[RMDB]
RNA sequence: GGGAACGACUCGAGUAGAGUCGAAAACUGAAGGCAUGUUGCCACUAAUAAAGGCCAUCCUUAUCAGCUGUGUUAGUAGCAGGUGGCAAUUAAUUUAUCUGCUGUACUUGGUACUAGAGAUAUCCUACAGCGGAACGUCCUUCGGGACGUUCCGCUGAAAAGAAACAACAACAACAAC
Reactivity to 2A3 in 0.01 (KOAc 150mM, MgCl2 10mM, bicine 150mM(pH8.5), 24C), signal-to-noise 1, nucleotides 027 to 126: c000u000g000a030a000g000g000c100a130u230g000u020u060g000c010c010a000c020u050a000a100u100a030a110a030g020g000c020c010a070u120c000c000u070u110a150u140c040a020g160c010u080g000u060g080u290u180a060g050u080a000g000c060a000g100g000u000g060g000c020a000a000u040u160a000a050u140u000u110a280u000c070u000g000c070u060g020u000a000c070u070u150g210g020u000a000c060u180a000g010a010g000a020u120a080u110c010c010u100a060